This 207-nucleotide RNA was probed chemically with 2A3 and DMS. The DMS profile rests on 5,105 reads. Values are in units of 0.01, from 0 to 300, in steps of 10. The 2A3 profile rests on 4,233 reads. The RNA was probed in 150 mM KOAc, 10 mM MgCl2 and 150 mM bicine (pH 8.5) at 24 C. For DMS the reverse transcriptase was MarathonRT. Values cover nucleotides 27 to 156.
RNA sequence: GGGAACGACUCGAGUAGAGUCGAAAAACGGACUACGGUCCGAAGGGUUCGGGGUACUAGUGUGAAUGCCCGGCUAGUACCCUGUGCUAGUGGUUUAUCUACUGAUGUUCAAUUAAGGGCAUGUGAAAAAAGACUCCUAACUUCGGUUAGGAGUCAAGCAUAAUAUACAGUUCGCUGUAUAUUAUGCAAAAGAAACAACAACAACAAC
Reactivity to 2A3 in 0.01 (KOAc 150mM, MgCl2 10mM, bicine 150mM(pH8.5), 24C), signal-to-noise 5, nucleotides 027 to 156: a000c000g000g000a010c020u050a030c180g090g000u010c000c000g020a070a030g100g020g000u090u160c010g010g000g000g000u000a000c000u000a000g030u020g050u060g150a130a010u010g000c000c000c000g000g000c000u000a000g000u000a000c000c000c000u000g020u040g020c030u050a040g020u020g120g060u050u240u110a110u120c030u030a030c040u040g100a160u150g120u190u230c160a170a070u170u190a250a280g000g000g000c000a000u040g040u040g050a100a090a040a020a000a000g000a000c000u010c000c000u000a000a010c000u010u060c130g050g000u000u000a000g010g000a000g010u000c000a000a000
Reactivity to DMS in 0.01 (KOAc 150mM, MgCl2 10mM, bicine 150mM(pH8.5), 24C), signal-to-noise 2, nucleotides 027 to 156: a130c030g010g010a040c040u010a110c240g040g000u000c000c000g020a050a090g020g010g010u000u000c040g010g030g000g020u000a010c020u000a010g010u000g040u010g000a060a060u000g010c000c020c020g010g000c020u000a030g000u000a010c000c000c020u010g020u000g000c070u000a080g020u000g020g000u010u000u000a090u050c040u000a090c000u010g000a100u000g020u010u010c110a100a200u000u020a120a130g030g010g010c010a040u000g030u010g000a010a030a090a080a070a130g000a030c020u000c000c000u000a010a000c010u010u010c300g000g010u000u000a010g010g000a000g000u010c000a000a070